[RMDB]
RNA sequence: GGGAACGACUCGAGUAGAGUCGAAAAUCAAUAGUAGAAUCUAUACGAUGAAGAUAUUCUACUAGGAGUAUCGAGAAAUCGUAUAGCUUGAUACUCAUCAGUCAGAGAAACAUACUCUUUGACUGAAGAUAGUAUGCUUAUUCGUAGGUAUACUAUCAAAAGAAACAACAACAACAAC
Reactivity to DMS in 0.01 (KOAc 150mM, MgCl2 10mM, bicine 150mM(pH8.5), 24C), signal-to-noise 9, nucleotides 027 to 126: u040c070a110a090u040a020g010u000a010g010a180a030u000c020u000a010u000a030c040g000a050u010g000a180a150g000a030u010a010u010u010c000u000a160c260u040a110g010g000a010g000u000a000u000c010g010a130g000a130a160a020u010c050g000u010a060u010a020g000c130u000u000g010a170u000a000c000u000c250a190u000c000a010g000u000c000a000g000a000g000a030a080a150c300a130u050a100c130u000c000u000u000u000g010a010c000u000g010a010a060
Reactivity to 2A3 in 0.01 (KOAc 150mM, MgCl2 10mM, bicine 150mM(pH8.5), 24C), signal-to-noise 9, nucleotides 027 to 126: u110c030a020a100u050a090g030u010a010g020a050a010u000c010u010a020u010a030c010g020a020u040g020a030a030g000a010u020a010u010u010c020u070a300c070u080a130g090g000a000g000u000a000u010c040g030a020g090a090a300a010u020c010g000u030a010u010a020g000c010u000u040g030a010u010a010c020u030c050a080u010c000a020g000u000c000a000g000a000g020a030a100a030c080a080u300a190c030u000c000u010u010u010g000a000c000u000g000a010a000